[RMDB]
RNA sequence: GGGAACGACUCGAGUAGAGUCGAAAAGCAAGUGAAGGAAUAACAGAUACUACCGUCAAUGCCUGGGGAAGGUGGGUAUUAAACUGGACAAAAAAUGGAGACACAUUUACAUUCACAUUCAAAAACUUCACAUAUUCAGUUUAUGACUAUGAUUGGCAGUCUCUGAAGAUUUCGAUCUUCAGAGACUAAAAGAAACAACAACAACAAC
Reactivity to 2A3 in 0.01 (KOAc 150mM, MgCl2 10mM, bicine 150mM(pH8.5), 24C), signal-to-noise 2, nucleotides 027 to 156: g100c080a100a000g040u060g090a000a040g000g130a120a020u150a140a020c030a010g150a040u170a130c020u090a100c080c040g100u140c030a100a030u040g000c000c000u050g020g050g000g000a000a130g030g000u020g040g000g000u000a020u030u030a020a000a040c030u070g000g140a000c100a060a130a000a000a000a000u040g040g000a080g090a030c010a020c010a100u120u080u190a090c040a040u030u220c080a070c030a090u080u210c130a120a060a000a040a050c010u060u090c040a000c000a150u110a090u050u020c010a000g040u030u020u050a060u050g020a010c060u040a030u220g090a060u130u000g110g000c010